The record gives the reactivity of an RNA of 177 nucleotides to DMS and 2A3. For 2A3, 1,586 sequencing reads were counted. DMS adducts were read by reverse transcription with MarathonRT. The data come from the RNA Mapping Database (RMDB), library OK2TRN. The RNA was probed in 150 mM KOAc, 10 mM MgCl2 and 150 mM bicine (pH 8.5) at 24 C. 2A3 adducts were read by reverse transcription with SuperScript II with manganese. The DMS profile rests on 924 reads.
RNA sequence: GGGAACGACUCGAGUAGAGUCGAAAACUGGACAUCCCGAAUGCGGCCUUCAUGCGCAUAUCGGAUGCACCCCUGAUAUCAGCGGCCACAUGCACAGUGAGUGAGUGCAUCUACUCAGCAGAUUACGCCAUGUCCGUCUUUUCGAAGACGGACAUGGAAAAGAAACAACAACAACAAC
Reactivity to DMS in 0.01 (KOAc 150mM, MgCl2 10mM, bicine 150mM(pH8.5), 24C), signal-to-noise 1, nucleotides 027 to 126: c030u000g010g040a180c040a070u000c130c040c110g010a030a030u000g000c000g050g010c040c110u020u010c240a140u010g030c020g000c030a000u000a090u010c020g000g000a070u000g020c000a090c030c030c020c080u000g010a010u010a050u000c100a100g010c070g020g010c010c040a120c140a080u000g000c070a090c000a050g020u000g010a150g020u000g010a120g000u010g010c030a050u010c020u020a020c050u000c010a100g020c050a020g010a140u020u020a090c190g010
Reactivity to 2A3 in 0.01 (KOAc 150mM, MgCl2 10mM, bicine 150mM(pH8.5), 24C), signal-to-noise 2, nucleotides 027 to 126: c070u090g080g070a000c010a010u070c000c010c050g040a020a000u010g020c000g080g170c050c030u250u220c130a120u250g020c020g000c020a010u060a300u040c000g000g000a000u020g010c010a110c010c000c000c010u070g070a070u030a030u300c010a020g000c000g100g000c050c000a020c010a100u010g000c010a020c000a020g070u060g130a080g030u040g030a020g000u010g010c000a040u010c010u010a020c010u020c040a030g040c010a000g030a130u110u080a080c060g010
High 2A3 reactivity points to a flexible backbone, as in loops and unpaired stretches.